[RMDB]
RNA sequence: GGGAACGACUCGAGUAGAGUCGAAAACUUUUUAACGUGUUCUAGCUACCAGUACUUCUUGAUCCGAAAUAGUGUCUGAAAUAAAGGAGCCAUUGCUGGUUCUUUCCGAUAACGAAAGCGUUUCUAAAGCAAUCUCGUAGGUUUGACCAGUCUUACAGCACCAUUUAUUAUUCGUAAUAAAUGGUGCAAAAGAAACAACAACAACAAC
Reactivity to DMS in 0.01 (KOAc 150mM, MgCl2 10mM, bicine 150mM(pH8.5), 24C), signal-to-noise 2, nucleotides 027 to 156: c050u010u000u030u000u000a010a160c050g050u000g000u010u000c030u000a200g020c050u010a080c030c010a070g010u000a080c040u000u020c030u000u020g050a100u040c020c030g010a080a080a110u010a080g090u000g010u000c000u010g000a110a040a150u000a100a110a130g000g000a150g040c050c230a110u000u020g060c100u000g000g020u000u000c000u000u010u000c020c020g020a200u010a040a200c060g010a070a090a130g030c060g000u010u000u000c120u020a070a050a100g040c030a080a150u010c020u010c030g020u010a110g020g020u000u010u000g000a210c040c010a160g010u000c060u000u010a100c130a250
Reactivity to 2A3 in 0.01 (KOAc 150mM, MgCl2 10mM, bicine 150mM(pH8.5), 24C), signal-to-noise 4, nucleotides 027 to 156: c020u150u100u050u110u250a120a060c070g040u100g030u120u030c050u040a080g010c010u040a040c000c030a030g040u040a080c040u040u050c010u040u060g030a040u030c030c030g050a040a120a130u060a060g040u040g040u040c020u040g040a050a090a070u140a050a150a040g060g010a010g030c050c030a080u070u180g020c040u050g020g000u050u040c000u010u040u000c020c000g060a070u050a170a080c030g020a050a050a020g030c010g020u020u130u060c150u170a140a100a010g000c020a030a070u030c010u000c060g040u060a060g020g020u030u010u050g010a020c010c010a040g020u000c010u040u090a100c100a020